An RNA of 207 nucleotides, treated with 2A3 and read out base by base. The 2A3 profile rests on 1,057 reads. 2A3 adducts were read by reverse transcription with SuperScript II with manganese. The reactions ran in a buffer of 150 mM KOAc, 10 mM MgCl2 and 150 mM bicine (pH 8.5), at 24 C.

RNA sequence: GGGAACGACUCGAGUAGAGUCGAAAACUGGGCGCCGAAGAACACACGCUCAUCGACACCGACCCGACACACCGACUCGCGAUCGCCGACACCGACCCGGUCGACAAUGGGUGGCUGCAGUUCAUCCGCAAUUCCGAGCUGCUGUCGCUGCUGACCGGAAGUGAGGCAUAUUCGUAUGCCUCACUUCAAAAGAAACAACAACAACAAC
Reactivity to 2A3 in 0.01 (KOAc 150mM, MgCl2 10mM, bicine 150mM(pH8.5), 24C), signal-to-noise 2, nucleotides 027 to 156: c010u000g010g010g010c010g050c040c080g110a120a080g050a260a010c030a010c010a020c090g000c080u020c010a010u070c090g070a030c020a010c040c010g060a090c040c040c030g080a030c020a000c010a000c050c040g090a030c030u000c050g010c030g020a040u010c020g050c080c020g070a070c020a030c080c020g070a080c000c010c000g000g020u030c040g070a080c200a150a110u200g080g020g000u000g010g000c000u000g020c020a000g000u020u030c030a140u120c030c110g170c180a160a090u300u000c120c040g000a030g000c000u000g000c010u010g000u010c010g020c010u150g060c050u080g000a010c000c010g000